[RMDB]
RNA sequence: GGGAACGACUCGAGUAGAGUCGAAAACAUGUGUACUUCGGUACACAUGAAAUGACCGCCAUUAUUGGCUAAGGCUACACGGACGGCCCGGUCAAAUGCCGAAAAUCGUUGCGUUCGCGCAACGAAACUCCUCCAGAUAGUUCGCUAUCUGGAGGAGAAAAGAAACAACAACAACAAC
Reactivity to 2A3 in 0.01 (KOAc 150mM, MgCl2 10mM, bicine 150mM(pH8.5), 24C), signal-to-noise 3, nucleotides 027 to 126: c000a000u000g010u010g000u000a000c000u030u080c210g110g010u000a000c000a000c000a000u000g010a020a000a010u080g020a020c000c010g140c030c000a100u150u130a150u290u300g030g000c040u060a170a110g050g000c010u020a040c080a020c100g010g010a010c010g040g000c000c000c000g000g020u010c030a020a030a030u080g010c010c000g000a060a020a010a050u020c000g000u000u000g010c020g020u010u030c270g010c000g000c080a010a000c000g000a000a010a000
Reactivity to DMS in 0.01 (KOAc 150mM, MgCl2 10mM, bicine 150mM(pH8.5), 24C), signal-to-noise 2, nucleotides 027 to 126: c010a000u000g000u000g000u000a000c000u000u020c170g000g020u010a010c000a000c020a000u010g000a000a100a160u010g000a020c000c000g050c000c020a020u000u000a150u030u000g000g010c090u000a030a060g020g020c010u000a040c140a080c070g000g030a020c050g010g000c010c040c070g000g000u000c060a070a080a090u000g000c000c010g000a140a090a050a120u000c010g010u000u000g000c000g000u000u000c300g020c020g010c000a000a000c000g000a020a050a120
An RNA of 177 nucleotides, treated with 2A3 and DMS and read out base by base. The DMS profile rests on 1,448 reads. The RNA was probed in 150 mM KOAc, 10 mM MgCl2 and 150 mM bicine (pH 8.5) at 24 C. For 2A3 the reverse transcriptase was SuperScript II with manganese. The data come from the RNA Mapping Database (RMDB), library M2PK50. For DMS the reverse transcriptase was MarathonRT.